Overview
The record gives the reactivity of an RNA of 177 nucleotides to 2A3. The reactions ran in a buffer of 150 mM KOAc, 10 mM MgCl2 and 150 mM bicine (pH 8.5), at 24 C. The 2A3 profile rests on 522 reads. 2A3 adducts were read by reverse transcription with SuperScript II with manganese.
RNA sequence: GGGAACGACUCGAGUAGAGUCGAAAAGCUCGGAGACGAGCAAGGCUGACAAAACCCUGUCCCAACCUCCACGUGGUGUCGGCUGGAUAAUGCUGCAUUAUGUUGCAUUUAUCAACUGGGAAGUAAAAAUCCCACGCUCAUUCGUGAGCGUGGGAUUAAAAGAAACAACAACAACAAC
Reactivity to 2A3 in 0.01 (KOAc 150mM, MgCl2 10mM, bicine 150mM(pH8.5), 24C), signal-to-noise 1, nucleotides 027 to 126: g000c000u010c000g040g050a010g020a080c020g000a030g050c020a030a020g010g010c000u030g000a030c060a000a300a010a030c020c060c040u010g020u080c000c000c010a050a000c010c010u110c020c090a070c000g080u040g000g080u030g060u000c000g000g000c040u060g030g000a000u000a000a000u000g000c000u020g000c010a160u090u120a120u290g050u060u020g000c010a000u020u030u080a000u070c020a000a010c030u080g040g040g040a040a000g000u040a010a100a010